Structure probing data (DMS) for a 177-nucleotide construct. The data come from the RNA Mapping Database (RMDB), library RFM100. The RNA was probed in 150 mM KOAc, 10 mM MgCl2 and 150 mM bicine (pH 8.5) at 24 C. Reactivities are given for positions 27 through 126.

RNA sequence: GGGAACGACUCGAGUAGAGUCGAAAAAGACUACUAGCUGAGUACGCUCAGCUAGUAGUCAAUUGUUUUUUUAGGUUUUGAUUUUUGUGAAAUGUCGAUGAGAAAAUCAAAACCUAAAGAAAAUAAACAAUGAGAGUUUGUUCGCAAACUCUCAUUGAAAAGAAACAACAACAACAAC
Reactivity to DMS in 0.01 (KOAc 150mM, MgCl2 10mM, bicine 150mM(pH8.5), 24C), signal-to-noise 1, nucleotides 027 to 126: a090g000a030c000u000a000c000u000a000g000c000u010g000a010g010u000a090c270g000c000u000c000a000g000c010u000a000g010u000a000g010u020c000a010a010u020u030g000u000u030u000u040u000u000u000a020g000g000u010u000u000u000g000a000u000u000u000u000u000g010u060g010a070a150a120u050g000u030c150g000a100u020g020a300g000a010a000a020a000u000c000a010a020a000a000c000c000u000a000a000a010g000a030a010a030a040u010a020a100a190